[RMDB]
RNA sequence: GGGAACGACUCGAGUAGAGUCGAAAAACUCCUGACCUCAGGUGAUCCGCCUACCUUGACCUCCCAAAGUGCUCAGAUUACAGGUGUGAGCCAUCGUGCCAUGCCAACCACUCACAUUUUUGAGUUAUCAUUAACAUUUGGGAUGGGAAUAGUUACCGGUUACGUUGAGUUUCGACUCAACGUAACCAAAAGAAACAACAACAACAAC
Reactivity to 2A3 in 0.01 (KOAc 150mM, MgCl2 10mM, bicine 150mM(pH8.5), 24C), signal-to-noise 2, nucleotides 027 to 156: a000c050u010c000c040u030g120a240c000c100u200c010a040g000g000u040g050a160u030c030c030g060c090c020u090a100c030c030u100u080g070a100c010c010u000c000c000c000a070a000a000g030u050g030c030u000c080a010g020a100u000u120a060c030a100g020g000u050g000u020g060a050g000c000c000a230u210c130g010u030g000c000c000a050u000g000c000c010a090a100c120c020a100c010u070c020a050c040a120u070u030u030u060u160g000a000g010u030u060a050u080c010a070u030u120a080a020c000a040u000u000u020g000g000g000a050u200g100g080g060a000a020u100a020g000u080u140a100c050c120
Source information:
Chemical mapping of a 207-nucleotide RNA with 2A3. Conditions: 150 mM KOAc, 10 mM MgCl2 and 150 mM bicine (pH 8.5), 24 C. 2A3 adducts were read by reverse transcription with SuperScript II with manganese. The data come from the RNA Mapping Database (RMDB), library OK3TST.